[RMDB]
RNA sequence: GGGAACGACUCGAGUAGAGUCGAAAACCGAAGCCCCAUUGAGGGAUAAUACAGGCUCUCCCAUCCAACUCCUAUUCCAACACGUCCUCGUCGUACAGAGUGGUCACAUGUGUCACCACAUAUCCAACAUAGUGUCGCAUCUUCGGAUGCGACACAAGUAAUCAUAUGGGUUCGCCCAUAUGAUUACAAAAGAAACAACAACAACAAC
Reactivity to DMS in 0.01 (KOAc 150mM, MgCl2 10mM, bicine 150mM(pH8.5), 24C), signal-to-noise 1, nucleotides 027 to 156: c070c010g000a150a190g030c020c000c010c040a270u000u010g010a100g040g030g010a030u000a070a130u000a070c080a110g040g040c000u000c090u000c020c000c000a120u000c050c010a060a110c040u000c000c000u000a080u000u010c000c000a090a030c060a080c010g000u010c010c040u000c030g010u010c000g010u000a110c060a090g000a090g010u010g020g010u000c040a070c040a110u000g030u000g010u000c000a090c000c010a000c010a090u000a110u000c050c080a020a090c080a130u000a130g020u000g000u000c000g050c000a040u000c000u000u000c270g040g000a000u000g000c000g030a000c000a000c000a000a060
Reactivity to 2A3 in 0.01 (KOAc 150mM, MgCl2 10mM, bicine 150mM(pH8.5), 24C), signal-to-noise 4, nucleotides 027 to 156: c000c000g020a060a040g090c000c000c000c000a120u050u150g030a160g070g000g000a030u130a100a040u100a090c080a040g020g010c000u010c010u000c010c010c010a030u030c040c020a040a050c020u010c010c010u050a060u050u050c020c020a010a050c050a030c070g080u040c010c000u020c020g080u010c020g000u050a080c060a040g110a030g100u050g010g000u050c020a030c030a090u190g060u080g030u130c030a000c050c000a010c020a050u160a050u050c040c030a050a020c010a180u130a090g000u000g000u000c010g000c000a000u010c000u040u050c170g090g000a010u000g000c000g000a000c000a000c000a000a000
The record gives the reactivity of an RNA of 207 nucleotides to DMS and 2A3. The RNA was probed in 150 mM KOAc, 10 mM MgCl2 and 150 mM bicine (pH 8.5) at 24 C. 2A3 adducts were read by reverse transcription with SuperScript II with manganese. It was measured as part of the RMDB library M2RFPK. For 2A3, 2,495 sequencing reads were counted.